[RMDB]
RNA sequence: GGGAACGACUCGAGUAGAGUCGAAAAGGAGGACCGAUAUGGAGAGCUGUCCAGGCUGUGAGGGGAGCACUCGUAUUCUUUUGACCUUUGCUAGAAGAGGGAAUACAGCGCUCUCCCUCACAGUCUGUGAUGACGUCCAAUUCGUUGGACGUCAUCAAAAAGAAACAACAACAACAAC
Reactivity to 2A3 in 0.01 (KOAc 150mM, MgCl2 10mM, bicine 150mM(pH8.5), 24C), signal-to-noise 6, nucleotides 027 to 126: g060g020a030g020g010a030c040c030g030a090u070a090u180g050g010a060g000a020g080c070u050g040u030c010c000a000g000g000c000u000g000u000g010a000g000g010g000g000a000g000c000a000c020u070c120g010u000a010u000u000c010u020u050u040u070g090a100c020c020u130u090u210g150c150u180a040g050a100a000g000a030g000g010g000a000a000u000a000c000a000g000c000g000c000u000c000u030c000c000c000u000c000a000c000a000g000u000c000u000g000
Reactivity to DMS in 0.01 (KOAc 150mM, MgCl2 10mM, bicine 150mM(pH8.5), 24C), signal-to-noise 5, nucleotides 027 to 126: g010g020a050g000g000a090c060c060g010a120u020a090u010g010g000a060g000a080g010c090u000g000u000c060c000a000g000g000c000u000g010u010g000a010g000g000g010g000a020g010c000a060c010u000c190g040u000a000u000u000c000u000u000u000u010g000a300c120c050u010u020u030g020c270u040a090g010a050a260g000a050g000g000g010a010a010u010a010c020a010g000c070g000c010u000c010u050c000c000c000u000c000a000c010a010g000u000c000u010g000
The record gives the reactivity of an RNA of 177 nucleotides to 2A3 and DMS. For DMS the reverse transcriptase was MarathonRT. Conditions: 150 mM KOAc, 10 mM MgCl2 and 150 mM bicine (pH 8.5), 24 C. For 2A3 the reverse transcriptase was SuperScript II with manganese.